[RMDB]
RNA sequence: GGGAACGACUCGAGUAGAGUCGAAAAGCUGGCGGUCCCGGGCGCAUAAGGAGUGGUGCACGGCUCAGGGCCGAAAGGCAGCAGGCAAAAGCCACCGCGCGGUGCAGUGGCCGGAUAGCGCUUGUGAGUUGUCGCUCGCCCACAGCCUCUCUGAUACCAUGUAUUAACUGUUCGCAGUUAAUACAUGAAAAGAAACAACAACAACAAC
Reactivity to 2A3 in 0.01 (KOAc 150mM, MgCl2 10mM, bicine 150mM(pH8.5), 24C), signal-to-noise 4, nucleotides 027 to 156: g020c030u030g020g040c030g010g030u030c000c000c000g010g010g000c040g000c020a050u080a140a060g090g010a090g040u050g040g020u050g000c050a020c070g050g000c010u020c040a060g010g030g000c010c020g030a050a020a010g020g000c030a020g010c030a010g040g010c000a040a060a050a080g010c000c000a030c040c010g000c010g000c040g000g060u160g040c060a080g050u080g060g010c000c020g030g020a100u110a060g020c030g020c050u050u080g080u040g080a120g010u060u070g070u130c040g000c030u020c030g010c010c010c010a050c010a020g020c010c000u000c000u010c020u040g050a060u040a190c080
Reactivity to DMS in 0.01 (KOAc 150mM, MgCl2 10mM, bicine 150mM(pH8.5), 24C), signal-to-noise 1, nucleotides 027 to 156: g000c060u010g000g050c010g020g000u000c000c000c010g020g060g060c040g000c020a040u030a090a110g030g000a170g030u010g010g020u000g010c020a140c070g000g030c000u010c070a140g040g030g010c020c000g030a030a050a120g020g010c030a130g020c040a040g020g000c050a090a110a180a110g020c000c000a080c000c020g020c050g060c020g000g000u010g010c020a050g020u000g000g010c000c000g000g000a300u000a080g010c260g010c030u000u020g010u000g000a130g030u010u010g030u010c050g010c000u030c030g000c140c000c050a110c040a070g030c020c030u040c030u010c020u000g020a180u000a170c150